[RMDB]
RNA sequence: GGGAACGACUCGAGUAGAGUCGAAAAGGACAGGUUCAUGCCGGUCACUUAUUUGGCAGCAACUAAUGACACAUACCGCACUUAUGAGGAAUUCAAGCAGGCUAAGAAGGAGGCCAUGAACAGACUAUCCCACUGCGGAAGUGGAAUGAGAAUGGUGCGUACUGCGUACAUUCGUGUACGCAGUACGAAAAGAAACAACAACAACAAC
Reactivity to 2A3 in 0.01 (KOAc 150mM, MgCl2 10mM, bicine 150mM(pH8.5), 24C), signal-to-noise 3, nucleotides 027 to 156: g000g010a050c050a040g000g080u120u120c040a040u220g040c000c020g010g050u070c040a120c130u060u140a130u130u110u110g020g000c000a000g000c000a040a030c020u080a060a100u090g030a040c020a000c000a120u100a050c000c020g000c020a060c070u160u060a040u160g030a040g020g070a070a080u060u100c040a030a000g040c040a030g010g060c000u010a050a070g000a040a020g080g000a020g050g000c020c010a020u020g020a030a030c010a020g060a030c010u040a040u070c050c010c010a050c050u080g000c040g090g040a060a030g020u030g000g070a020a080u130g000a030g030a080a070u120g060g050u050g030
Reactivity to DMS in 0.01 (KOAc 150mM, MgCl2 10mM, bicine 150mM(pH8.5), 24C), signal-to-noise 1, nucleotides 027 to 156: g000g000a050c050a040g030g000u000u000c050a090u010g050c000c080g070g040u010c060a040c070u000u000a080u000u000u000g010g130c020a200g000c010a050a070c080u000a020a110u000g000a150c000a030c100a160u010a130c080c010g080c020a040c070u000u040a130u000g040a060g030g000a210a120u000u000c040a100a100g000c060a030g030g040c100u000a040a100g010a100a040g050g020a290g000g000c030c000a100u000g000a030a070c040a070g000a160c010u010a130u000c010c010c000a110c040u010g080c150g000g030a110a120g050u000g010g030a010a010u010g020a110g000a050a020u010g000g050u010g000
Description:
The record gives the reactivity of an RNA of 207 nucleotides to 2A3 and DMS. DMS adducts were read by reverse transcription with MarathonRT. 2A3 adducts were read by reverse transcription with SuperScript II with manganese. The reactions ran in a buffer of 150 mM KOAc, 10 mM MgCl2 and 150 mM bicine (pH 8.5), at 24 C.